[RMDB]
RNA sequence: GGGAACGACUCGAGUAGAGUCGAAAACAGGCGCGUCGGCCGCAAAGGAAGCUUGGGUGGACGAGCCGCCUUCCGCUCUCGGCACCGUAUCUCGAAUACUUUCUCGUUGCUGGGACCUUAGGCGCGGUCUACUGAGGCGGUUCGCUGCUUCGGUAGAAAAAGAAACAACAACAACAAC
Reactivity to 2A3 in 0.01 (KOAc 150mM, MgCl2 10mM, bicine 150mM(pH8.5), 24C), signal-to-noise 9, nucleotides 027 to 126: c020a000g010g000c000g000c000g010u010c000g040g000c000c000g000c010a020a020a000g050g020a080a020g050c010u060u050g040g020g000u050g060g010a040c010g010a020g020c010c000g000c010c000u070u020c020c020g030c020u000c000u010c000g010g000c010a020c040c020g040u070a100u060c120u070c090g090a150a060u120a170c030u070u140u040c080u030c060g070u050u030g000c020u040g000g020g050a070c000c020u070u110a050g020g000c020g000c030g050g020
Reactivity to DMS in 0.01 (KOAc 150mM, MgCl2 10mM, bicine 150mM(pH8.5), 24C), signal-to-noise 9, nucleotides 027 to 126: c100a120g010g010c030g010c020g010u010c030g010g000c020c020g010c100a060a070a080g010g010a090a070g010c020u000u010g010g010g030u000g000g010a070c040g000a050g000c030c020g000c020c010u000u010c030c030g000c100u000c020u000c040g000g000c030a040c050c050g000u020a050u010c050u020c110g000a110a080u020a070c100u010u010u010c070u010c060g010u010u000g000c010u010g000g000g000a100c070c040u010u010a050g000g010c040g010c040g000g000